[RMDB]
RNA sequence: GGGAACGACUCGAGUAGAGUCGAAAAGAUAUGGAAUCUCAAACGGAACGGCUCGCAUUGCCACUCUACAUCGGAAACGAUGUAGGAGCAAUGAACUACGAGCCGUUCCGUUUAGGAUUCCUAAGUCCUUAAUUACAAUGUUCGCAUUGUAAUUAAGAAAAGAAACAACAACAACAAC
Reactivity to DMS in 0.01 (KOAc 150mM, MgCl2 10mM, bicine 150mM(pH8.5), 24C), signal-to-noise 6, nucleotides 027 to 126: g000a120u010a300u010g010g000a030a000u000c000u000c040a010a020a010c010g000g000a020a030c000g010g000c000u000c000g000c020a010u000u010g010c010c070a170c150u010c020u000a010c000a000u010c000g000g010a190a110a240c010g020a010u000g010u000a000g010g000a220g000c010a010a010u000g010a100a070c170u020a300c020g010a010g000c010c000g000u000u000c000c000g010u000u000u000a010g000g000a010u000u000c000c000u000a020a090g000u000c040

Structure probing data (DMS) for a 177-nucleotide construct. Source: RMDB library TTRINS, as collected in RNAgym. The DMS profile rests on 12,158 reads. Reactivities are rounded to 0.1 and cut off at 0 and 3.